[RMDB]
RNA sequence: GGGAACGACUCGAGUAGAGUCGAAAACAAGCGCGACAAGUGCACAGGAUGUUUGGAGAAACAAAGCGCGCCGAGUCAGCCCCAGCGAAGGUCGCCUCCUGUGCGGCCACCCACAUGGGGCCUGGCCUCUAGGGAGGGGGUUCGCUCCUUCUCUAGAAAAAGAAACAACAACAACAAC
Reactivity to DMS in 0.01 (KOAc 150mM, MgCl2 10mM, bicine 150mM(pH8.5), 24C), signal-to-noise 9, nucleotides 027 to 126: c090a120a110g010c010g010c010g000a080c070a070a230g010u020g000c020a030c020a020g000g010a190u040g000u010u020u010g020g020a130g010a140a090a030c030a040a140a200g000c010g000c000g010c020c090g000a090g020u000c010a060g000c050c000c000c010a040g000c140g010a090a090g000g010u010c120g000c010c020u010c030c020u010g000u010g000c020g000g000c000c020a030c040c030c050a130c140a130u020g010g010g000g010c110c050u000g000g000c020c090
Reactivity to 2A3 in 0.01 (KOAc 150mM, MgCl2 10mM, bicine 150mM(pH8.5), 24C), signal-to-noise 9, nucleotides 027 to 126: c050a030a040g010c010g000c000g050a080c040a130a050g060u040g050c010a000c010a010g030g020a080u120g220u190u200u230g250g020a190g080a060a100a010c050a030a070a030g030c010g000c000g000c020c030g020a020g010u010c010a000g000c000c000c000c000a020g030c050g100a180a060g000g000u020c010g010c000c000u050c000c010u020g020u030g000c000g000g000c000c010a020c010c010c000a090c020a150u070g000g000g000g000c010c000u000g000g000c000c000